[RMDB]
RNA sequence: GGGAACGACUCGAGUAGAGUCGAAAAUGAUGUCGAAGCCACACAAUCUGGCAACAAACAGUCUUCAACACUCUUGAGACAAUUUGAUGUUGAGAAAUCAAAUUUACCUAAACCUGUGACAGUUAAAACCCUGUGCGAAACUUUGACGUCUGAGGACCUAGCUGUGAUUCUUCGGAAUCACAGCUAGAAAAGAAACAACAACAACAAC
Reactivity to 2A3 in 0.01 (KOAc 150mM, MgCl2 10mM, bicine 150mM(pH8.5), 24C), signal-to-noise 1, nucleotides 027 to 156: u060g000a000u030g000u070c010g050a060a020g010c130c000a030c000a010c010a130a150u000c040u040g020g000c060a060a020c020a000a240a000c010a010g010u020c040u150u110c130a050a020c080a040c120u160c040u120u110g050a030g000a030c060a090a030u000u020u000g120a070u060g020u110u040g030a040g140a220a180a000u040c010a020a020a020u170u190u100a060c000c040u070a180a050a060c080c000u070g050u040g030a030c000a010g030u080u150a000a020a100a090c030c000c080u100g000u020g000c070g120a110a170a140c030u000u060u060g010a000c060g000u060c030u090g060a080g050g050a020c040
Chemical mapping of a 207-nucleotide RNA with 2A3. Values cover nucleotides 27 to 156. High 2A3 reactivity points to a flexible backbone, as in loops and unpaired stretches. It was measured as part of the RMDB library OK3TST. 2A3 adducts were read by reverse transcription with SuperScript II with manganese. The RNA was probed in 150 mM KOAc, 10 mM MgCl2 and 150 mM bicine (pH 8.5) at 24 C.